[RMDB]
RNA sequence: GGGAACGACUCGAGUAGAGUCGAAAACAUCUAUUGUGGUCAAGUAAUUGGAUGCGGACCACGUGCCCGUAGCGUUCAAUGCUACGACGGUUGAGACCGCAAUAGGGAUUUUUGGGCCGCGAACUGACUCGUACUGAUCAUUCGUGAUCAGUGCGAGAAAAGAAACAACAACAACAAC
Reactivity to DMS in 0.01 (KOAc 150mM, MgCl2 10mM, bicine 150mM(pH8.5), 24C), signal-to-noise 5, nucleotides 027 to 126: c050a110u030c000u000a010u000u000g010u000g000g010u010c010a080a150g010u040a060a120u020u000g010g010a060u020g000c020g000g000a050c000c020a040c150g010u010g000c050c050c010g000u000a010g000c000g000u030u050c290a120a070u040g000c000u000a010c010g000a050c120g010g000u000u000g010a170g020a020c000c000g000c000a000a000u000a010g010g000g010a070u000u000u000u010u000g000g000g000c000c000g010c020g010a080a140c060u010g000a300
Reactivity to 2A3 in 0.01 (KOAc 150mM, MgCl2 10mM, bicine 150mM(pH8.5), 24C), signal-to-noise 5, nucleotides 027 to 126: c000a020u000c000u000a000u000u000g000u020g010g000u000c010a060a050g080u060a110a100u060u060g070g010a010u060g000c010g010g010a050c000c000a020c030g020u040g020c010c000c000g000u010a000g000c000g050u100u120c140a110a040u160g000c000u000a000c010g050a040c050g010g000u020u060g050a040g000a030c000c000g000c000a000a000u000a000g050g040g010a060u070u070u010u100u100g040g010g000c000c000g000c000g020a050a050c030u030g020a030